[RMDB]
RNA sequence: GGGAACGACUCGAGUAGAGUCGAAAAGUCAUCAUCACGGAACCGCUGAGACGUGGCCGUCUGCCCAUCCUCGGUUAAAUCUAGCAGACUGGUUUCCGGGUGCGCUUUGCCUGUCGUGCUGCCCGGCGACGAGACCUAACGGCGAGGAUAAGCAUGUCUAAUGGGCAUUCUUCGGAAUGCCCAUUAGAAAAGAAACAACAACAACAAC
Reactivity to 2A3 in 0.01 (KOAc 150mM, MgCl2 10mM, bicine 150mM(pH8.5), 24C), signal-to-noise 2, nucleotides 027 to 156: g020u030c020a090u060c010a020u090c020a100c130g090g060a080a080c030c020g000c110u090g050a040g010a100c040g020u040g000g010c040c000g000u060c010u030g040c000c030c000a110u060c000c020u020c010g000g030u090u220a110a100a090u070c090u120a030g000c010a010g050a130c000u090g020g000u000u000u010c020c000g000g000g010u030g000c110g010c040u120u090u090g090c000c040u140g090u170c000g000u000g010c050u080g040c020c000c000g000g000c010g010a020c000g000a010g050a040c050c020u040a120a060c050g050g000c060g050a010g000g020a060u090a090a020g160c110a030u080g040u000
This 207-nucleotide RNA was probed chemically with 2A3. The 2A3 profile rests on 907 reads. Reactivities are given for positions 27 through 156. It was measured as part of the RMDB library ARCHII. Values are in units of 0.01, from 0 to 300, in steps of 10.